The data come from the RNA Mapping Database (RMDB), library 15KLIB. This 170-nucleotide RNA was probed chemically with DMS and 2A3. The 2A3 profile rests on 30,207 reads. DMS adducts were read by reverse transcription with MarathonRT. For 2A3 the reverse transcriptase was SuperScript II with manganese.
RNA sequence: GGGAACGACUCGAGUAGAGUCGAAAACCCCUUCGAGGAUUCCCCUGCGACGGGUAGGCUCAUCCUGAGACCGGGGAGCUUCGAAGAUCUCUCUAUUCUCCAGAAAGGAGGAAGGAGCUCUCGAACGAUGCCAUCGUCUUCGGACGAUGGAAAAGAAACAACAACAACAAC
Reactivity to DMS in 0.01 (KOAc 150mM, MgCl2 10mM, bicine 150mM(pH8.5), 24C), signal-to-noise 7, nucleotides 027 to 129: c000c000c010c100u010u040c000g060a040g010g020a190u050u020c000c000c000c000u040g030c040g050a300c120g030g000g040u040a080g050g000c080u030c100a060u050c030c020u000g010a130g030a280c030c020g000g020g030g010a050g010c030u000u000c010g020a000a000g000a070u080c090u000c040u030c040u030a150u040u040c000u070c030c030a180g100a160a140a130g020g050a040g050g060a060a270g020g010a060g040c100u000c030u030c050g030a100a090c160g050a090u150g030
Reactivity to 2A3 in 0.01 (KOAc 150mM, MgCl2 10mM, bicine 150mM(pH8.5), 24C), signal-to-noise 9, nucleotides 027 to 129: c000c000c000c000u000u010c000g020a020g000g070a270u050u030c000c000c000c000u020g010c010g070a070c020g040g000g010u040a070g170g040c040u050c070a100u060c030c000u010g020a040g020a100c040c060g000g000g000g000a010g010c010u000u000c000g000a020a010g010a010u020c030u000c000u000c010u020a190u150u030c010u000c020c010a080g210a250a150a080g050g010a000g010g000a000a050g040g000a000g000c010u010c000u030c040g060a100a050c050g040a050u180g060
The reactions ran in a buffer of 150 mM KOAc, 10 mM MgCl2 and 150 mM bicine (pH 8.5), at 24 C.